[RMDB]
RNA sequence: GGGAACGACUCGAGUAGAGUCGAAAAAAGGAGUGUGUAACAACUCACCUGCCGAAUGAACUAGCCCUGAAAAUGGAUGGCGCUAAAGCGGGCUACUUAUACUUUGCCGUUAGCGCGAUAGCAUUUAGUCUAAAGUCCCGUUCGCGGGACUUUAGACAAAAGAAACAACAACAACAAC
Reactivity to DMS in 0.01 (KOAc 150mM, MgCl2 10mM, bicine 150mM(pH8.5), 24C), signal-to-noise 1, nucleotides 027 to 126: a030a020g000g000a010g030u010g010u030g000u080a070a200c240a150a160c000u000c000a060c010c000u000g030c010c040g020a030a090u040g050a140a180c150u000a110g010c000c030c000u010g000a030a010a070a060u080g000g010a140u000g000g020c000g030c000u000a000a080a030g070c070g080g000g020c000u000a100c160u120u040a110u020a070c190u040u000u020g040c000c090g000u000u040a010g000c030g000c000g000a040u000a000g010c000a050u000u000u000a150
Reactivity to 2A3 in 0.01 (KOAc 150mM, MgCl2 10mM, bicine 150mM(pH8.5), 24C), signal-to-noise 1, nucleotides 027 to 126: a140a000g000g000a000g000u100g000u000g000u050a090a090c080a070a080c030u070c000a240c000c000u000g000c000c020g080a000a110u000g000a000a030c070u010a000g050c000c000c000u020g280a030a000a000a000u020g000g000a000u180g200g000c000g000c000u000a000a000a150g300c080g020g000g170c000u000a000c030u230u210a040u200a220c150u000u220u220g000c000c000g000u000u000a010g000c070g000c000g010a000u000a040g070c080a000u270u250u000a000
This 177-nucleotide RNA was probed chemically with DMS and 2A3. For DMS, 1,021 sequencing reads were counted. Source: RMDB library RFM100, as collected in RNAgym. In probing experiments dimethyl sulfate is read out at A N1 and C N3, which are open when not base-paired.